[RMDB]
RNA sequence: GGGAACGACUCGAGUAGAGUCGAAAAAUAAACACUGCCUUUGAGCCUGGAUUAGACUCAAUUUUGGAAAAAACUUUAGAACUUUUGGAGUGGGCUAAAAAUUACGAUUUUACAAGCAGUGUGCUAGGCCUAGUACAUACUUCGGUAUGUACUAGGCAAAAGAAACAACAACAACAAC
Reactivity to DMS in 0.01 (KOAc 150mM, MgCl2 10mM, bicine 150mM(pH8.5), 24C), signal-to-noise 1, nucleotides 027 to 126: a040u030a130a140a050c010a010c010u000g020c000c130u000u000u010g000a030g040c030c030u010g030g010a250u010u000a020g010a040c000u000c030a040a030u010u010u000u010g010g020a030a030a090a040a110a120c110u010u000u000a040g000a070a130c040u000u000u030u020g010g030a130g000u020g010g030g000c040u010a000a030a000a090a080u000u030a070c170g020a090u000u000u020u020a050c050a030a030g000c010a000g000u000g000u000g010c130u020a070g030
Reactivity to 2A3 in 0.01 (KOAc 150mM, MgCl2 10mM, bicine 150mM(pH8.5), 24C), signal-to-noise 1, nucleotides 027 to 126: a000u060a000a030a000c020a000c010u000g020c000c000u080u030u130g040a000g000c020c020u070g090g070a170u150u030a070g020a050c000u010c030a040a070u000u060u120u090g080g010a140a000a000a000a000a130c040u030u100u060a060g050a170a260c020u160u050u110u120g010g020a010g030u050g020g090g000c000u030a090a140a020a040a020u110u130a060c100g070a010u000u000u040u130a020c010a000a020g010c000a000g000u020g030u000g040c030u010a010g160